RNA sequence: GGGAACGACUCGAGUAGAGUCGAAAAGAAUACGAUGUAAAUACCCACCGUUUUCACGAGGCGCAUUUAUGCGCGUCUUAUCAAGAUGCCGGACUGUUAGCUACUGAUUUAUUAUCAACAAUACCCGCUGUAUUGCCUGUUAAAUUACAAGCAGUCGCGUGCAGGAUAUUUUCGAAUAUCCUGCACGAAAAGAAACAACAACAACAAC
Reactivity to 2A3 in 0.01 (KOAc 150mM, MgCl2 10mM, bicine 150mM(pH8.5), 24C), signal-to-noise 4, nucleotides 027 to 156: g030a040a070u130a090c080g050a050u110g020u150a040a130a080u150a090c000c020c070a040c030c040g030u030u060u070u120c100a070c080g020a030g010g000c010g000c030a040u040u230u110a230u300g060c090g000c000g030u000c000u040u040a050u070c010a060a040g020a070u050g030c010c040g060g010a030c040u060g050u150u080a020g010c020u080a050c010u050g050a040u030u050u130a110u060u080a100u070c020a010a080c000a070a030u050a110c010c030c110g040c090u050g030u050a040u040u050g010c010c010u040g040u060u050a050a190a120u150u060a050c020a060a000g000c010a010g040u040c030g000
Reactivity to DMS in 0.01 (KOAc 150mM, MgCl2 10mM, bicine 150mM(pH8.5), 24C), signal-to-noise 2, nucleotides 027 to 156: g010a130a060u000a070c010g030a090u000g030u000a050a050a110u000a160c070c080c000a060c040c020g010u010u000u020u000c030a170c110g010a060g050g010c010g040c010a100u000u000u000a100u030g040c060g020c000g020u000c020u000u000a090u000c070a070a150g010a060u000g000c000c030g000g010a080c100u010g010u000u000a100g020c030u000a040c080u000g010a070u000u000u000a040u030u000a160u000c020a020a040c020a020a040u000a030c010c050c300g020c170u000g030u000a020u000u000g020c000c130u000g000u000u000a010a030a060u000u000a100c030a090a020g000c000a050g020u000c080g020